[RMDB]
RNA sequence: GGGAACGACUCGAGUAGAGUCGAAAAAGCUUCGUACUUUGUUAUGAUGCUCACCAUAUCGUCUAACAAACUAAUUGAUAGUUUGCCUAUAGAUUUGAUGCUUAAUUAAGUUCGUCAUGCUCACCUACAUGUAGUUAGAGUUCGCUCUAACUACAUGAAAAGAAACAACAACAACAAC
Reactivity to DMS in 0.01 (KOAc 150mM, MgCl2 10mM, bicine 150mM(pH8.5), 24C), signal-to-noise 7, nucleotides 027 to 126: a030g010c010u000u000c010g020u000a020c020u000u000u000g010u010u000a010u000g000a070u010g000c090u000c070a190c080c050a060u000a040u000c030g010u010c090u000a060a190c000a000a000a010c010u000a030a240u010u010g010a140u000a010g010u000u000u000g000c150c090u000a120u000a060g000a020u000u010u010g010a020u000g010c070u010u000a050a050u000u000a040a050g010u000u000c020g010u000c120a040u000g010c030u000c060a120c040c020u000a170
Reactivity to 2A3 in 0.01 (KOAc 150mM, MgCl2 10mM, bicine 150mM(pH8.5), 24C), signal-to-noise 4, nucleotides 027 to 126: a000g000c010u030u030c010g010u000a010c010u030u070u130g030u130u000a030u040g130a040u090g010c030u020c040a080c040c000a030u060a010u110c040g030u010c030u040a030a010c000a020a010a000c010u040a050a080u170u140g140a140u180a060g000u000u000u010g030c010c010u100a090u040a070g030a030u090u000u170g020a010u060g000c010u040u030a030a010u090u040a100a000g030u050u030c010g050u040c040a030u110g000c010u020c010a070c020c010u040a050